[RMDB]
An RNA of 177 nucleotides, treated with DMS and 2A3 and read out base by base.
The DMS profile rests on 12,670 reads.
For DMS the reverse transcriptase was MarathonRT.
RNA sequence: GGGAACGACUCGAGUAGAGUCGAAAAAAAACCUAGAUGAUGGGUUGAUAGGUGCAGCAAACCACUAUGGCACACGUAUACCUGUGUAACAAACCUACACAUUCUGCACAUGUAUCCCAGAACGUAAGUAGCUAAAAAUGUUCGCAUUUUUAGCUACAAAAGAAACAACAACAACAAC
Reactivity to DMS in 0.01 (KOAc 150mM, MgCl2 10mM, bicine 150mM(pH8.5), 24C), signal-to-noise 6, nucleotides 027 to 126: a080a040a030a030c000c010u000a050g000a110u040g010a150u010g010g000g000u000u000g000a110u010a050g010g020u000g000c040a040g010c300a080a060a090c100c060a050c160u020a100u010g000g000c070a070c080a050c060g030u000a070u030a080c130c060u010g020u010g020u020a070a100c150a080a070a100c200c060u000a030c070a050c070a040u000u010c020u000g000c010a000c030a040u010g010u020a090u010c000c000c010a100g000a080a050c170g020u020a060a110
Reactivity to 2A3 in 0.01 (KOAc 150mM, MgCl2 10mM, bicine 150mM(pH8.5), 24C), signal-to-noise 6, nucleotides 027 to 126: a010a000a000a010c090c020u080a100g020a130u180g010a030u050g010g000g050u080u030g040a090u080a100g090g000u010g000c010a030g000c010a010a100a070c050c030a060c110u080a120u140g060g000c040a020c010a020c080g040u070a080u060a140c010c020u040g000u000g000u020a050a040c040a120a070a030c060c030u050a020c040a000c000a050u090u010c000u000g030c010a010c010a020u120g030u050a010u010c000c000c010a020g060a030a010c010g010u050a020a150

2A3 adducts were read by reverse transcription with SuperScript II with manganese. Source: RMDB library OK1LIB, as collected in RNAgym. The RNA was probed in 150 mM KOAc, 10 mM MgCl2 and 150 mM bicine (pH 8.5) at 24 C.